The record gives the reactivity of an RNA of 177 nucleotides to DMS and 2A3. The data come from the RNA Mapping Database (RMDB), library OK1LIB. 2A3 adducts were read by reverse transcription with SuperScript II with manganese.
RNA sequence: GGGAACGACUCGAGUAGAGUCGAAAAGAAGUAAAUGAAAAGCUACGUGAAAAAUUAGAAGCGGCAUUUGACACGAUUUACGAAUUGUCUCAAAAUCGAAAAAUAGAUAUGAGACUUGCAGCAUAUACAUCCAAUGUCAUUUCGAUGACAUUGGAUGAAAAGAAACAACAACAACAAC
Reactivity to DMS in 0.01 (KOAc 150mM, MgCl2 10mM, bicine 150mM(pH8.5), 24C), signal-to-noise 3, nucleotides 027 to 126: g030a100a100g050u010a020a000a020u000g000a130a040a120a150g030c050u000a080c020g000u010g010a000a070a030a040a040u010u010a050g010a050a050g000c030g000g030c140a090u020u000u010g000a200c060a080c050g010a080u000u010u000a050c070g000a080a130u040u010g020u020c040u010c010a000a020a060a070u010c010g000a010a120a060a080a150u050a100g000a030u010a100u030g000a020g010a000c000u010u010g030c160a070g020c070a060u020a120u030a140
Reactivity to 2A3 in 0.01 (KOAc 150mM, MgCl2 10mM, bicine 150mM(pH8.5), 24C), signal-to-noise 4, nucleotides 027 to 126: g120a060a010g020u100a020a030a060u110g070a110a060a050a000g070c020u060a010c050g020u010g040a080a020a060a050a040u150u180a050g050a130a000g020c010g040g000c020a040u030u010u120g070a040c010a010c050g100a090u010u050u120a030c030g030a060a100u120u050g000u000c000u000c000a080a140a110a160u030c040g100a110a100a000a050a050u140a110g020a030u030a030u030g020a020g000a010c000u020u060g040c020a040g020c020a000u070a000u010a200
High DMS reactivity at an A or C suggests that its Watson-Crick edge is free.
DMS adducts were read by reverse transcription with MarathonRT.